An RNA of 177 nucleotides, treated with DMS and 2A3 and read out base by base. The data come from the RNA Mapping Database (RMDB), library M2PK90. The DMS profile rests on 2,031 reads.

[RMDB]
RNA sequence: GGGAACGACUCGAGUAGAGUCGAAAAUAAAAUAGCGUAAUGGACAUUGGGAGUGUACGCUAAGUGUGUGUUGUAUACGUAAGGUGCAAUUGAACACACACACAGUUGCACCUAAUGUCCAAAAAAAACGUAGCAAUAUGUUCGCAUAUUGCUACGUAAAAGAAACAACAACAACAAC
Reactivity to DMS in 0.01 (KOAc 150mM, MgCl2 10mM, bicine 150mM(pH8.5), 24C), signal-to-noise 2, nucleotides 027 to 126: u010a060a100a110a060u020a070g000c100g000u010a080a150u010g000g000a010c020a000u000u000g010g000g010a050g040u020g010u000a020c100g010c060u000a030a170g010u000g000u000g010u010g000u010u010g010u010a070u000a050c050g010u010a090a130g000g020u010g000c070a070a120u000u000g000a090a040c000a030c010a000c010a000c030a050c260a040g000u000u010g010c010a050c000c000u010a010a010u010g000u010c000c000a000a000a000a010a030a030a010
Reactivity to 2A3 in 0.01 (KOAc 150mM, MgCl2 10mM, bicine 150mM(pH8.5), 24C), signal-to-noise 1, nucleotides 027 to 126: u250a020a040a010a040u090a010g150c050g040u080a100a000u110g000g040a010c000a010u020u040g030g000g020a080g140u100g040u030a030c020g000c080u030a180a250g040u040g000u000g000u000g080u100u050g010u040a040u070a190c100g070u090a050a140g000g040u020g040c010a000a040u090u180g150a160a010c030a000c000a000c000a000c000a020c030a040g000u040u040g000c000a010c010c000u000a000a000u000g000u060c000c000a060a030a000a000a030a020a000
Conditions: 150 mM KOAc, 10 mM MgCl2 and 150 mM bicine (pH 8.5), 24 C.